[RMDB]
RNA sequence: GGGAACGACUCGAGUAGAGUCGAAAAGCAUCAUGUUGAAAUUAUUCAAGAAAAAGAGCUCAUCUAGGAGUGUAGCUUCAGAAUCAGAAGGAUCUUCUCUAUGGUCCUUUGGGAAACCUCCUCCUAAGGACAUAACCUAGUUCGCUAGGUUAUGUCCAAAAGAAACAACAACAACAAC
Reactivity to DMS in 0.01 (KOAc 150mM, MgCl2 10mM, bicine 150mM(pH8.5), 24C), signal-to-noise 2, nucleotides 027 to 126: g000c080a040u010c120a080u000g050u020u020g000a040a060a130u000u020a110u020u010c020a040a080g020a080a080a080a130a060g000a040g010c030u050c110a050u010c090u000a030g000g000a040g030u010g020u080a020g000c100u000u000c070a070g040a190a070u030c070a170g000a010a040g000g000a010u010c040u010u030c150u010c230u020a130u010g020g000u010c020c000u000u010u000g030g040g010a080a010a100c100c030u000c070c000u020c000c030u050a070a180
Reactivity to 2A3 in 0.01 (KOAc 150mM, MgCl2 10mM, bicine 150mM(pH8.5), 24C), signal-to-noise 5, nucleotides 027 to 126: g060c000a070u120c040a050u150g090u070u120g100a080a050a040u300u130a130u120u180c050a030a090g130a110a100a010a020a010g080a000g020c030u020c050a120u040c090u060a020g030g020a020g020u090g060u180a000g000c010u090u090c050a050g080a130a090u110c020a030g030a060a010g000g030a020u000c030u180u050c100u050c050u150a140u200g010g000u000c000c000u010u010u000g050g000g040a020a050a040c010c060u030c010c000u060c010c000u040a090a070

Structure probing data (DMS and 2A3) for a 177-nucleotide construct.
For 2A3, 2,458 sequencing reads were counted.
The reactions ran in a buffer of 150 mM KOAc, 10 mM MgCl2 and 150 mM bicine (pH 8.5), at 24 C.
The DMS profile rests on 2,896 reads.
Reactivities are given for positions 27 through 126.